Record summary
This 177-nucleotide RNA was probed chemically with 2A3 and DMS. It was measured as part of the RMDB library OK1LIB. For DMS, 82,258 sequencing reads were counted. 2A3 adducts were read by reverse transcription with SuperScript II with manganese. Reactivities are given for positions 27 through 126.
[RMDB]
RNA sequence: GGGAACGACUCGAGUAGAGUCGAAAAGUGCGAGGUCGAGAGUAGCUUACGAUCUUUGCAGUGUUUCAUGAGACCUUUAUCCAUGAAGCACAAGGUCUCAUACGUAGGACAAAGAUACCUCGCUGAAGAUACUGUAUCAUUUCGAUGGUGCAGUAUCAAAAGAAACAACAACAACAAC
Reactivity to 2A3 in 0.01 (KOAc 150mM, MgCl2 10mM, bicine 150mM(pH8.5), 24C), signal-to-noise 9, nucleotides 027 to 126: g150u090g000c000g000a010g000g010u050c050g040a010g010a010g110u130a030g020c010u030u040a020c020g040a040u020c000u030u030u070g060c060a040g010u010g030u040u050u040c030a010u010g010a020g010a130c040c040u040u010u100a070u010c020c010a030u050g060a040a010g010c020a010c010a020a000g030g000u020c020u000c040a030u050a050c020g030u030a030g020g050a040c010a010a070a000g040a010u050a020c000c000u000c000g000c000u010g020a050a010
Reactivity to DMS in 0.01 (KOAc 150mM, MgCl2 10mM, bicine 150mM(pH8.5), 24C), signal-to-noise 9, nucleotides 027 to 126: g010u020g010c000g020a010g000g010u000c070g000a180g010a130g010u030a120g010c100u010u010a060c050g000a050u000c030u000u000u010g010c090a150g010u010g010u010u010u010c090a020u000g000a050g000a010c100c070u010u000u030a160u030c090c070a090u020g010a080a070g000c150a050c130a000a030g000g000u010c020u010c050a030u010a080c080g000u000a050g000g000a110c030a040a060a050g000a070u020a030c000c000u000c000g000c010u000g000a100a090
Conditions: 150 mM KOAc, 10 mM MgCl2 and 150 mM bicine (pH 8.5), 24 C.